This 207-nucleotide RNA was probed chemically with 2A3 and DMS.
RNA sequence: GGGAACGACUCGAGUAGAGUCGAAAACUGGUUGAUGAUUAGUCCCGCACCGCGUGAGGCAGGAAACUGAGCAGCGAAAAGGGGCAGCUGCGGACGGCACAAGGAUCGCAUGCUUGAGGGAGUGGCAUGGCCACCCGAGGGGUCCUCUGUGGGACCAUCCCAAUAGUAGGUUCGCCUACUAUUGGGAAAAAGAAACAACAACAACAAC
Reactivity to 2A3 in 0.01 (KOAc 150mM, MgCl2 10mM, bicine 150mM(pH8.5), 24C), signal-to-noise 1, nucleotides 027 to 156: c030u080g070g070u010u060g030a090u000g030a060u040u200a050g060u050c080c020c030g040c020a050c000c040g000c020g020u060g080a060g040g060c030a040g030g020a080a030a020c040u080g000a030g070c030a010g000c050g000a040a000a090a060g000g010g020g000c020a000g010c000u020g000c020g050g010a030c030g060g020c020a020c020a150a040g040g010a030u010c040g000c110a030u120g070c020u030u060g060a140g000g030g000a120g040u030g020g000c110a220u140g080g000c050c000a000c100c000c010g020a030g010g020g000g010u010c010c020u050c060u050g020u150g030g000g020a000c000c000a020
Reactivity to DMS in 0.01 (KOAc 150mM, MgCl2 10mM, bicine 150mM(pH8.5), 24C), signal-to-noise 1, nucleotides 027 to 156: c010u000g020g010u000u020g010a090u000g010a190u010u010a040g010u000c000c000c000g000c030a150c030c030g010c070g000u000g000a100g010g030c040a090g010g010a080a090a110c070u000g000a130g010c000a110g000c020g000a030a070a070a160g010g030g030g070c090a140g000c030u010g060c040g000g000a090c090g030g000c020a050c040a060a050g020g020a110u000c010g000c010a140u000g000c050u010u000g040a180g000g020g000a130g040u000g010g030c010a090u010g010g000c000c000a050c020c000c030g010a090g030g020g010g050u000c010c010u050c050u000g000u000g020g010g020a040c020c010a080
For 2A3 the reverse transcriptase was SuperScript II with manganese. The reactions ran in a buffer of 150 mM KOAc, 10 mM MgCl2 and 150 mM bicine (pH 8.5), at 24 C. It was measured as part of the RMDB library ARCHII.